[RMDB]
Structure probing data (2A3) for a 207-nucleotide construct. It was measured as part of the RMDB library OK3TST. Values cover nucleotides 27 to 156.
RNA sequence: GGGAACGACUCGAGUAGAGUCGAAAAAAAGUCAAGUGAAGAGAGGAUAAAGAUCCAACACACUUUCUCUGGCAACUCUUGAGUUCUACAUCAAUUACUAUUUGUCCAGCUGGCUUCAACAUUGACCUUCCUUUGUAUUUAGGAACAAACAGUUGAAGGACUCCUUUUAGUUCGCUAAAAGGAGUCCAAAAGAAACAACAACAACAAC
Reactivity to 2A3 in 0.01 (KOAc 150mM, MgCl2 10mM, bicine 150mM(pH8.5), 24C), signal-to-noise 1, nucleotides 027 to 156: a000a000a000g000u000c000a020a020g000u010g090a210a000g100a000g040a040g020g010a000u200a040a300a060g110a030u000c030c010a040a000c050a000c000a030c090u050u060u030c010u060c000u000g040g020c080a100a080c010u010c010u030u060g030a020g010u130u050c020u110a090c030a060u050c010a000a140u080u030a050c040u180a110u100u040u120g100u010c040c020a010g030c000u020g010g050c010u090u080c010a030a060c040a130u000u020g060a070c020c000u010u000c000c000u000u000u050g040u010a090u030u210u220a000g010g000a020a020c000a010a010a180c000a080g260u300u290g070a040a020